This 177-nucleotide RNA was probed chemically with DMS and 2A3. 2A3 adducts were read by reverse transcription with SuperScript II with manganese. It was measured as part of the RMDB library M2PK90.
[RMDB]
RNA sequence: GGGAACGACUCGAGUAGAGUCGAAAAAUAAAGAGCGUAAACGCGUCAUUGAGUGACGUGAAGUUCAUCCAAGUGUGCUGUCUACAGUCGUAGAUAGCGCACAUUACGCUAAGAUGAUCAUAAAAAACAACAUACGGAUGUUCGCAUCCGUAUGUUGAAAAGAAACAACAACAACAAC
Reactivity to DMS in 0.01 (KOAc 150mM, MgCl2 10mM, bicine 150mM(pH8.5), 24C), signal-to-noise 3, nucleotides 027 to 126: a070u030a040a110a100g000a050g000c000g010u000a010a050a170c040g020c000g000u000c000a060u000u010g010a160g010u000g010a010c010g000u000g000a030a100g010u010u000c050a050u000c030c070a090a070g000u000g010u000g000c000u000g000u000c000u000a010c010a220g020u010c230g010u010a010g000a010u010a020g020c010g000c000a010c010a010u000u000a020c020g020c000u000a070a100g010a080u000g020a060u010c150a110u050a000a050a050a050a060a140
Reactivity to 2A3 in 0.01 (KOAc 150mM, MgCl2 10mM, bicine 150mM(pH8.5), 24C), signal-to-noise 5, nucleotides 027 to 126: a010u240a020a080a040g100a000g000c010g000u010a000a030a040c010g010c000g020u010c010a020u070u300g250a120g270u050g010a010c000g000u010g080a070a000g030u050u070c020a030u010c050c020a040a060g000u000g000u000g000c010u010g020u000c000u000a060c110a270g160u270c180g000u100a000g000a000u000a000g010c000g000c000a000c000a000u000u020a010c010g000c010u020a020a040g100a090u160g020a030u100c090a080u300a070a130a010a020a000a020